The data come from the RNA Mapping Database (RMDB), library OK1LIB. This 177-nucleotide RNA was probed chemically with DMS and 2A3.
RNA sequence: GGGAACGACUCGAGUAGAGUCGAAAAAUCUACCUGUUAUCUAGCUUUGGGCUAGGCCAUUCCAGUUCCAGACGCAGGCUGAACGUCGUGAAGCGGAAGGGGCGGGCCCGCAGGCGUCCGUGUGGUCCCUGGUCCAUUUGUUCGCAAAUGGACCAGGAAAAGAAACAACAACAACAAC
Reactivity to DMS in 0.01 (KOAc 150mM, MgCl2 10mM, bicine 150mM(pH8.5), 24C), signal-to-noise 1, nucleotides 027 to 126: a020u030c020u010a030c080c010u000g000u000u020a150u010c070u000a080g030c040u000u060u030g020g000g000c010u010a080g020g000c060c040a200u010u000c010c060a140g040u000u020c020c090a060g000a100c040g000c100a180g000g120c070u000g020a030a270c000g010u000c020g040u000g060a010a060g010c120g010g000a060a100g000g000g000g020c010g010g020g010c000c000c040g060c110a090g000g000c080g000u030c000c020g010u040g000u000g010g000u010c020
Reactivity to 2A3 in 0.01 (KOAc 150mM, MgCl2 10mM, bicine 150mM(pH8.5), 24C), signal-to-noise 1, nucleotides 027 to 126: a010u050c070u060a060c000c000u010g040u160u020a170u110c020u030a000g030c000u050u160u230g080g020g010c020u010a040g000g000c080c000a090u100u020c020c020a040g080u060u010c060c070a040g000a060c000g070c060a040g090g010c010u130g030a100a010c020g000u000c000g040u010g090a050a020g060c030g030g020a050a030g130g000g060g000c000g010g030g000c000c000c000g070c080a060g020g030c060g020u030c030c060g030u110g000u050g020g020u060c040
For 2A3 the reverse transcriptase was SuperScript II with manganese.